RNA sequence: GGGAACGACUCGAGUAGAGUCGAAAACCACCACUAUUACGGCCAUCACAAGAAAAUUCAUGCAAGUGGAAACGGUGAUAGUAGCAGCUGGUAUGACACGUUGGUAGCAGUAGCGGUGGUAAUGCCGCCUAUAUCCUAAGUUCGCUUAGGAUAUAGGAAAAGAAACAACAACAACAAC
Reactivity to 2A3 in 0.01 (KOAc 150mM, MgCl2 10mM, bicine 150mM(pH8.5), 24C), signal-to-noise 9, nucleotides 027 to 126: c000c000a000c010c000a010c010u030a020u050u050a020c030g040g000c020c000a030u050c030a040c030a150a070g170a160a150a060a020u130u050c010a000u040g030c020a040a020g020u040g070g030a090a050a020c030g050g070u160g120a130u110a210g090u060a010g030c040a000g010c010u030g020g020u040a030u040g020a010c010a000c190g030u040u030g020g000u020a020g010c020a000g000u010a000g010c010g010g010u010g000g000u030a040a030u110g040c010c010g020
Reactivity to DMS in 0.01 (KOAc 150mM, MgCl2 10mM, bicine 150mM(pH8.5), 24C), signal-to-noise 9, nucleotides 027 to 126: c010c010a080c030c020a030c020u000a030u000u000a050c050g010g020c010c010a020u000c040a110c130a120a120g000a070a060a090a110u010u010c030a040u000g000c050a050a050g020u000g000g010a130a080a050c060g010g020u000g010a080u010a150g010u000a040g020c100a180g010c030u000g010g020u000a030u000g000a050c230a050c100g000u000u000g010g010u000a090g030c030a020g020u000a030g010c030g010g030u000g000g000u000a040a060u000g020c010c020g010

Structure probing data (2A3 and DMS) for a 177-nucleotide construct. For 2A3, 29,311 sequencing reads were counted.